Structure probing data (DMS and 2A3) for a 207-nucleotide construct. The reactions ran in a buffer of 150 mM KOAc, 10 mM MgCl2 and 150 mM bicine (pH 8.5), at 24 C. DMS adducts were read by reverse transcription with MarathonRT.
RNA sequence: GGGAACGACUCGAGUAGAGUCGAAAAACUCUUGCAGUGCUUAAGAACUUCCUUUUUAAGAUUGAAGGUCUUGUUAAGAAUGUAGCUGAGAGCUAUAUUGAACCUAUGCAGGGUGAGUUUGAUGCUUUGCUUGGUAAUUACCUAGCGAGUGUUAAAAACGUUAUACUUCGUUCGCGAAGUAUAACGUAAAAGAAACAACAACAACAAC
Reactivity to DMS in 0.01 (KOAc 150mM, MgCl2 10mM, bicine 150mM(pH8.5), 24C), signal-to-noise 2, nucleotides 027 to 156: a020c010u000c010u000u000g020c040a120g000u010g000c010u010u000a040a000g000a020a020c020u010u010c020c030u030u020u000u000u000a090a270g000a140u010u010g010a010a030g010g010u010c030u000u000g010u000u000a030a080g000a070a040u000g000u000a050g000c010u000g010a110g010a110g020c000u000a060u010a050u000u000g010a130a100c040c030u000a070u000g020c090a030g000g000g010u000g000a130g010u000u000u000g000a060u000g010c010u000u000u000g060c010u000u000g000g010u000a140a150u010u000a080c010c010u000a020g020c000g000a000g070u000g020u000u010a030a060a030a080
Reactivity to 2A3 in 0.01 (KOAc 150mM, MgCl2 10mM, bicine 150mM(pH8.5), 24C), signal-to-noise 3, nucleotides 027 to 156: a020c020u020c000u020u090g000c010a020g040u030g090c060u260u170a040a010g000a020a000c000u040u040c000c000u040u080u060u070u210a150a110g050a110u080u110g020a000a010g000g010u000c030u060u070g040u020u040a080a030g040a080a020u020g000u020a000g000c050u140g160a070g060a030g300c010u010a000u010a010u020u070g050a030a010c000c010u040a110u060g000c010a010g020g050g020u030g030a040g020u000u100u030g030a050u020g010c000u050u010u290g000c000u000u030g010g000u130a240a290u170u190a070c000c000u000a000g000c000g010a010g020u040g040u030u040a010a030a070a000